[RMDB]
RNA sequence: GGGAACGACUCGAGUAGAGUCGAAAAAGACGUGUACGCACGUCACACCGUGGCGGCGGUGUAAAACAAACAUUAAGCCGCCAGCGUCCCGGAACAAGGCAUUUUCCGAUUCUCCGGGGGUAGCAAAAAAACUGAACUUGGUUCGCCAAGUUCAGAAGGUUAUAAUUACGUUCGCGUAAUUAUAACCAAAAGAAACAACAACAACAAC
Reactivity to 2A3 in 0.01 (KOAc 150mM, MgCl2 10mM, bicine 150mM(pH8.5), 24C), signal-to-noise 2, nucleotides 027 to 156: a000g020a000c020g000u000g010u050a040c200g010c100a000c010g000u020c000a000c000a000c010c010g030u050g000g000c010g010g000c010g030g000u020g000u020a090a110a010a020c040a010a120a010c020a040u080u130a140a010g000c000c000g020c020c010a000g000c010g040u060c020c000c000g010g010a040a030c060a060a040g070g000c100a110u110u080u140u150c020c040g060a060u120u030c040u010c040c000g000g000g000g020g070u160a040g060c040a080a060a020a020a000a000a020c000u000g000a000a000c000u000u000g000g000u030u020c030g000c060c000a000a000g000u000u000c000a000g000a010a030
Reactivity to DMS in 0.01 (KOAc 150mM, MgCl2 10mM, bicine 150mM(pH8.5), 24C), signal-to-noise 2, nucleotides 027 to 156: a100g010a000c000g030u050g000u010a150c160g070c010a030c020g000u010c020a100c100a030c040c050g000u000g010g030c000g040g050c020g000g000u000g000u000a070a070a090a200c170a120a220a100c010a070u010u010a050a040g060c020c000g030c010c010a010g020c010g020u000c010c000c010g000g000a040a080c090a070a120g000g060c180a140u010u010u010u000c010c000g010a280u000u000c050u010c020c010g030g010g000g010g000u010a070g030c040a000a030a060a130a090a090a230c010u010g000a000a000c020u000u000g020g000u010u010c300g040c000c010a020a020g020u000u000c000a000g000a040a020